[RMDB]
RNA sequence: GGGAACGACUCGAGUAGAGUCGAAAAGGAAAGAUGGAAACAUCAAAGACACAACAGCAAAGUGUCAAGCUGAAAGACGUGGAACUGGCUAAUAAAAUUGGCCGGAUCAUACCACGUUGAAAAAAAAGAUAAUCUAAUGCUUCGGCAUUAGAUUAUCAAAAGAAACAACAACAACAAC
Reactivity to DMS in 0.01 (KOAc 150mM, MgCl2 10mM, bicine 150mM(pH8.5), 24C), signal-to-noise 2, nucleotides 027 to 126: g020g000a100a000a110g010a010u010g000g000a210a190a110c000a010u000c000a080a070a210g020a020c020a000c070a030a130c170a160g000c150a070a070a080g010u000g010u000c030a100a080g010c160u000g010a080a050a220g000a000c000g020u000g000g020a130a080c010u000g020g000c020u040a010a070u000a040a050a010a300u000u000g000g020c000c010g010g000a020u000c120a150u060a190c020c000a010c000g000u000u010g000a000a010a000a070a100a020a070a040
Reactivity to 2A3 in 0.01 (KOAc 150mM, MgCl2 10mM, bicine 150mM(pH8.5), 24C), signal-to-noise 2, nucleotides 027 to 126: g130g000a150a080a060g000a030u010g000g040a060a040a000c000a000u010c030a000a060a050g000a000c000a000c000a030a150c060a060g250c070a120a130a040g010u000g010u010c040a030a030g110c050u050g070a110a140a060g020a010c010g000u010g010g000a010a060c020u000g020g000c000u020a030a030u080a100a290a090a090u050u010g000g000c000c050g000g030a030u080c020a030u020a080c010c010a000c000g000u000u000g040a090a090a000a000a000a000a000a000
Source information: The record gives the reactivity of an RNA of 177 nucleotides to DMS and 2A3. The DMS profile rests on 978 reads. Conditions: 150 mM KOAc, 10 mM MgCl2 and 150 mM bicine (pH 8.5), 24 C. The 2A3 profile rests on 1,648 reads. The data come from the RNA Mapping Database (RMDB), library M2PK90.